RNA sequence: GGGAACGACUCGAGUAGAGUCGAAAAGAUAUGGACGGUAUCAGGGAGCUCCUGACUCGGAAACGAGUCCUGAGCAUCGAUCUGAGACCGUCCUAAGUCAAAACAAUGAGCUGUUCGCAGCUCAUUGGUCACGAAUUAGGUUCGCCUAAUUCGUGACAAAAGAAACAACAACAACAAC
Reactivity to DMS in 0.01 (KOAc 150mM, MgCl2 10mM, bicine 150mM(pH8.5), 24C), signal-to-noise 4, nucleotides 027 to 126: g020a020u010a220u010g010g000a010c000g000g000u000a040u000c000a020g000g000g020a150g020c010u000c000c020u000g000a000c000u000c000g010g010a040a060a130c000g010a020g010u000c000c020u000g000a020g040c000a260u010c270g000a100u000c000u010g000a010g000a010c000c000g000u000c000c000u000a010a060g000u000c020a100a070a100a300c020a020a000u000g000a000g030c010u000g020u010u010c300g010c010a000g000c000u000c000a000u000u000g000
Reactivity to 2A3 in 0.01 (KOAc 150mM, MgCl2 10mM, bicine 150mM(pH8.5), 24C), signal-to-noise 3, nucleotides 027 to 126: g010a000u040a020u050g010g000a020c010g000g000u010a010u030c000a010g030g020g200a220g010c010u000c000c000u010g000a000c000u010c000g000g000a040a020a000c000g000a000g020u000c010c020u010g000a000g000c020a080u300c140g120a160u000c000u000g000a000g000a010c000c010g000u000c010c000u000a010a000g000u000c000a000a000a070a110c010a000a000u000g000a000g030c000u010g060u190u250c300g020c190a000g000c000u000c010a000u000u000g010
The data come from the RNA Mapping Database (RMDB), library TTRDES. Structure probing data (DMS and 2A3) for a 177-nucleotide construct. 2A3 adducts were read by reverse transcription with SuperScript II with manganese. The reactions ran in a buffer of 150 mM KOAc, 10 mM MgCl2 and 150 mM bicine (pH 8.5), at 24 C. Reactivities are given for positions 27 through 126. The 2A3 profile rests on 12,184 reads.